[RMDB]
RNA sequence: GGGAACGACUCGAGUAGAGUCGAAAACGAGACAGUGGGAUGCAACGCCGAAAGGCGACGCUAAUCUCCGAAACUCGGUCGUAGUUCGGAUUGCGGAUUGAAACUCAUCCGCAUGAAGCUGGAUUCGCGAGUGUCAGUAGUUCGCUACUGACACUCGAAAAGAAACAACAACAACAAC
Reactivity to DMS in 0.01 (KOAc 150mM, MgCl2 10mM, bicine 150mM(pH8.5), 24C), signal-to-noise 3, nucleotides 027 to 126: c040g010a030g000a060c080a040g030u040g000g000g010a020u010g000c010a040a280c000g000c010c000g020a080a090a140g000g000c010g040a020c300g000c000u000a070a040u010c000u010c000c000g000a050a090a040c010u020c000g010g010u020c060g000u000a070g020u020u030c030g000g000a070u000u020g020c010g000g000a020u020u030g010a070a200a040c260u010c100a030u000c000c000g020c000a000u000g010a270a110g010c200u000g010g030a030u000u000c040g000
Reactivity to 2A3 in 0.01 (KOAc 150mM, MgCl2 10mM, bicine 150mM(pH8.5), 24C), signal-to-noise 4, nucleotides 027 to 126: c020g020a020g060a020c070a040g050u300g070g010g000a000u010g010c000a040a020c000g000c010c010g050a080a020a010g020g000c020g000a010c030g000c000u080a040a030u010c010u010c000c010g050a100a040a030c010u010c000g000g050u020c040g060u060a060g060u090u190c020g010g000a020u000u020g010c010g000g000a010u070u090g080a220a080a050c120u130c080a010u000c000c000g030c000a000u000g000a000a010g000c050u060g030g040a130u100u050c030g000
Structure probing data (DMS and 2A3) for a 177-nucleotide construct. The data come from the RNA Mapping Database (RMDB), libraries RFM100 and RFMREP. High 2A3 reactivity points to a flexible backbone, as in loops and unpaired stretches. Reactivities are given for positions 27 through 126. In probing experiments dimethyl sulfate is read out at A N1 and C N3, which are open when not base-paired. For DMS the reverse transcriptase was MarathonRT.